Source information
This 207-nucleotide RNA was probed chemically with 2A3. Conditions: 150 mM KOAc, 10 mM MgCl2 and 150 mM bicine (pH 8.5), 24 C. The 2A3 profile rests on 1,533 reads.
[RMDB]
RNA sequence: GGGAACGACUCGAGUAGAGUCGAAAACUGAAGCUAGGAGACUUCUCAGGAAGCUCUCUCUGAGAGACUAGUCAGUCCUGACUUCAGUCGACUAGAGUCAGGAGAGAGACUUCCUAGCUUCUCGAUCUCUCCUAGGAGAUCAGGACUCUCUCUAGGAGGUGUGACAAUAGUUCGCUAUUGUCACACCAAAAGAAACAACAACAACAAC
Reactivity to 2A3 in 0.01 (KOAc 150mM, MgCl2 10mM, bicine 150mM(pH8.5), 24C), signal-to-noise 2, nucleotides 027 to 156: c030u030g000a000a010g020c000u000a000g040g050a070g050a150c040u060u040c080u060c180a150g090g110a030a020g040c030u030c000u000c000u000c040u050g070a110g010a000g030a220c010u020a010g020u020c050a040g000u000c020c010u080g080a170c040u090u150c260a130g040u120c060g030a000c000u020a000g000a030g210u040c050a030g070g030a000g000a000g000a000g010a040c040u070u000c000c000u000a000g000c000u000u010c010u010c050g150a160u020c040u010c000u000c020c010u010a020g010g000a010g010a010u040c020a020g000g020a050c000u030c000u000c000u000c010u010a010g000g000a000